The record gives the reactivity of an RNA of 177 nucleotides to DMS and 2A3.
DMS adducts were read by reverse transcription with MarathonRT.
High DMS reactivity at an A or C suggests that its Watson-Crick edge is free.
Source: RMDB libraries RFM100 and RFMREP, as collected in RNAgym.
2A3 adducts were read by reverse transcription with SuperScript II with manganese.
RNA sequence: GGGAACGACUCGAGUAGAGUCGAAAACAGCGAUAGUAUGGAUGGGACAUUGGUAUUUACAGUACUAAUGCAAAUACUGUAUUUUUCUAUAUAGUGCGCAAUAUGUAGGAAUUUGCAGUUAGAUUAGUAGAUAGCGCUUAUUCGUAAGCGCUAUCUAAAAAGAAACAACAACAACAAC
Reactivity to DMS in 0.01 (KOAc 150mM, MgCl2 10mM, bicine 150mM(pH8.5), 24C), signal-to-noise 4, nucleotides 027 to 126: c070a100g020c090g020a090u010a050g000u000a060u010g000g010a090u000g020g010g010a150c010a020u000u000g000g000u000a010u000u010u020a090c280a170g010u000a040c000u000a000a010u000g010c070a070a070a080u010a010c000u000g010u000a000u000u000u000u000u000c000u000a010u030a000u000a000g000u030g020c130g010c090a090a080u000a000u010g020u000a010g000g000a000a010u010u000u000g010c000a000g000u000u020a040g010a100u000u010a070g010
Reactivity to 2A3 in 0.01 (KOAc 150mM, MgCl2 10mM, bicine 150mM(pH8.5), 24C), signal-to-noise 5, nucleotides 027 to 126: c040a010g070c000g090a050u090a080g130u120a080u150g060g080a110u080g020g050g030a030c020a020u020u020g020g000u040a070u050u180u120a080c050a020g020u000a000c000u020a000a000u060g040c020a070a090a030u150a020c000u000g000u020a010u000u020u000u000u000c000u000a010u000a000u010a020g190u150g110c120g010c100a100a060u020a010u020g020u000a000g000g000a010a010u000u010u020g000c000a000g010u020u010a030g020a070u050u060a030g070